[RMDB]
RNA sequence: GGGAACGACUCGAGUAGAGUCGAAAAAGAGGAAGCACUACCUUUACUGUGGUCUGGCCCCAAGCACUGUUUUGGUGAUGAGGGCAAGUACCUAUAGGGCAGUGUUUUGCACCUCUGAGAGUGGAGUUAGGGCAAGGGAAUUCGUUCCCUUGCCCUAAAAAGAAACAACAACAACAAC
Reactivity to 2A3 in 0.01 (KOAc 150mM, MgCl2 10mM, bicine 150mM(pH8.5), 24C), signal-to-noise 2, nucleotides 027 to 126: a000g050a050g000g000a060a000g000c020a030c000u000a050c030c030u000u150u120a130c200u260g070u110g110g000u020c000u000g090g000c000c000c000c050a080a090g020c000a000c000u000g070u300u220u230u300g030g010u050g000a000u010g000a170g080g000g020c010a030a000g020u030a040c000c000u000a010u080a040g000g000g000c060a000g030u000g030u010u000u000u010g000c010a100c000c000u000c030u000g050a100g040a020g070u150g000g070a150g020u030
Reactivity to DMS in 0.01 (KOAc 150mM, MgCl2 10mM, bicine 150mM(pH8.5), 24C), signal-to-noise 1, nucleotides 027 to 126: a050g000a030g000g010a110a110g000c010a020c000u000a050c000c000u000u030u000a050c300u020g000u020g020g000u000c000u020g010g010c020c030c000c060a110a300g000c000a000c020u010g050u000u020u020u040g000g020u000g000a020u000g010a250g000g000g010c000a070a000g000u020a010c030c010u010a030u000a010g000g000g000c050a000g030u000g020u020u010u000u020g000c150a220c030c000u000c010u000g000a110g000a120g000u000g030g010a080g010u010
This 177-nucleotide RNA was probed chemically with 2A3 and DMS. The reactions ran in a buffer of 150 mM KOAc, 10 mM MgCl2 and 150 mM bicine (pH 8.5), at 24 C.